RNA sequence: GGGAACGACUCGAGUAGAGUCGAAAACUACGCCACCCUCGAGGAAGACGCUCCGCUCCCCUACGUCUCCUGGUAUGCGGCCCAGGCCUUCUGCAGGUGGCUGGAGGACUACCUUCCCCCCUCCAUCCAUGACCACCGUAUUCGUACGGUGGUCAUGAAAAGAAACAACAACAACAAC
Reactivity to DMS in 0.01 (KOAc 150mM, MgCl2 10mM, bicine 150mM(pH8.5), 24C), signal-to-noise 2, nucleotides 027 to 126: c050u000a110c120g020c040c040a060c040c030c020u000c150g020a120g000g000a060a040g000a060c050g000c040u000c050c030g010c050u000c030c030c020c040u000a110c070g010u000c070u000c000c040u000g010g010u000a040u000g010c130g010g000c190c030c050a120g000g000c050c020u000u020c010u000g030c120a180g020g000u010g000g020c030u000g000g020a020g000g010a240c120u000a080c060c030u000u000c000c000c010c030c000c000u000c010c060a100u030c110